[RMDB]
RNA sequence: GGGAACGACUCGAGUAGAGUCGAAAAGCACUCCUUUUCGAAGGAGUGCCCAGGCGCGCGGCCUUUGUCCUGUCGCGUGUGCGCCGCCCGCGAUAUACGCGCAUCUGUGCAUAUUCGUAUGCACAAACAAGGUAGCUAGAUUCGUCUAGCUACCUUGAAAAGAAACAACAACAACAAC
Reactivity to 2A3 in 0.01 (KOAc 150mM, MgCl2 10mM, bicine 150mM(pH8.5), 24C), signal-to-noise 4, nucleotides 027 to 126: g000c000a000c000u000c010c000u020u030u050u120c250g100a020a000g000g000a010g000u010g000c010c010c000a010g030g000c020g010c000g000c010g030g070c000c000u090u100u160g070u050c010c020u050g020u050c040g000c010g010u050g050u060g030c060g050c020c020g020c010c010c010g010c000g030a020u060a020u040a190c020g000c010g000c040a070u030c080u100g000u000g000c010a000u020a020u030u070c170g070u030a000u010g000c000a000c000a000a020a010
Reactivity to DMS in 0.01 (KOAc 150mM, MgCl2 10mM, bicine 150mM(pH8.5), 24C), signal-to-noise 4, nucleotides 027 to 126: g000c010a010c000u000c000c000u000u000u000u010c160g030a030a010g010g010a020g030u000g000c000c040c090a060g010g000c050g010c060g000c020g000g020c010c050u000u010u010g010u010c070c070u000g000u000c060g010c000g020u010g010u010g000c040g000c050c040g010c030c050c020g010c020g000a070u010a090u000a090c080g010c010g010c060a120u020c150u000g010u000g010c000a020u010a020u000u020c180g020u010a010u000g000c000a000c000a020a080a180